[RMDB]
Structure probing data (2A3 and DMS) for a 177-nucleotide construct. Values cover nucleotides 27 to 126. 2A3 adducts were read by reverse transcription with SuperScript II with manganese. The reactions ran in a buffer of 150 mM KOAc, 10 mM MgCl2 and 150 mM bicine (pH 8.5), at 24 C. It was measured as part of the RMDB library OK1LIB. For 2A3, 2,865 sequencing reads were counted. The DMS profile rests on 1,729 reads.
RNA sequence: GGGAACGACUCGAGUAGAGUCGAAAAGAAUAUAAGAGCGCAGUAAGUGUGAGAGCAAACUGCGCCCGGACUGUAGGAUCCGGUGGCACAGCAACGCUCACUCACAAAACGCUGUGCCACGUGAAGACCACCGCUAGUAUUUCGAUACUAGCGGUGGAAAAGAAACAACAACAACAAC
Reactivity to 2A3 in 0.01 (KOAc 150mM, MgCl2 10mM, bicine 150mM(pH8.5), 24C), signal-to-noise 3, nucleotides 027 to 126: g040a030a010u260a010u060a090a010g020a010g000c000g000c000a000g010u060a090a020g010u040g000u040g090a060g000a000g030c020a010a070a050c000u000g000c000g000c000c000c000g000g020a000c020u140g100u300a110g030g130a120u010c010c010g010g010u020g010g000c000a000c000a000g000c000a000a080c040g010c030u010c000a030c000u090c000a090c040a030a070a010a020c060g000c000u000g000u000g000c000c000a000c030g090u090g060a020a010g030a050
Reactivity to DMS in 0.01 (KOAc 150mM, MgCl2 10mM, bicine 150mM(pH8.5), 24C), signal-to-noise 2, nucleotides 027 to 126: g010a090a130u000a070u040a030a100g020a100g000c000g010c010a000g000u000a070a200g030u030g000u000g000a040g010a030g000c050a120a150a060c000u000g000c050g010c010c000c000g000g000a020c010u000g020u030a080g010g000a270u000c000c020g000g030u000g000g000c000a030c000a000g050c000a080a150c130g010c030u000c060a000c050u020c300a170c280a030a000a220a010c140g000c000u000g000u000g000c010c000a000c040g060u050g000a050a160g010a280